[RMDB]
RNA sequence: GGGAACGACUCGAGUAGAGUCGAAAAGCAAGAUGCUUCGGCAUCUUGCAGUCGUUGCGCGAUCGACAGAAUUACAGCUAUGUCGAACGAGGAAGAGCGCGCACAUCAUCCCUUUCGAGGGAUGAAAUUCCUAUUCAGUGUUCGCACUGAAUAGGAAAAAAGAAACAACAACAACAAC
Reactivity to DMS in 0.01 (KOAc 150mM, MgCl2 10mM, bicine 150mM(pH8.5), 24C), signal-to-noise 5, nucleotides 027 to 126: g010c010a000a000g010a000u000g000c000u000u010c200g050g020c000a010u000c000u010u000g010c000a050g000u000c070g010u010u010g020c000g020c010g010a210u000c000g000a020c010a020g000a120a170u000u000a110c300a160g000c100u000a110u000g010u000c000g010a010a090c100g000a130g010g000a060a070g000a140g010c020g000c010g000c020a040c190a140u000c000a000u000c000c010c000u000u010u010c160g010a020g010g000g000a010u000g000a000a060a110
Reactivity to 2A3 in 0.01 (KOAc 150mM, MgCl2 10mM, bicine 150mM(pH8.5), 24C), signal-to-noise 3, nucleotides 027 to 126: g000c000a000a010g000a000u010g000c010u040u100c220g070g000c000a010u020c000u010u000g000c010a000g020u030c040g070u080u080g000c000g000c000g000a050u030c020g000a000c000a020g100a050a050u230u180a210c060a050g070c090u090a050u090g010u010c000g010a030a040c050g040a070g100g100a090a050g030a040g110c000g000c000g020c020a000c020a020u000c000a010u000c000c000c000u020u030u010c210g090a020g010g010g020a010u010g000a020a000a000
Source information
Structure probing data (DMS and 2A3) for a 177-nucleotide construct. Source: RMDB library M2PK50, as collected in RNAgym. The DMS profile rests on 5,878 reads. For DMS the reverse transcriptase was MarathonRT. Conditions: 150 mM KOAc, 10 mM MgCl2 and 150 mM bicine (pH 8.5), 24 C.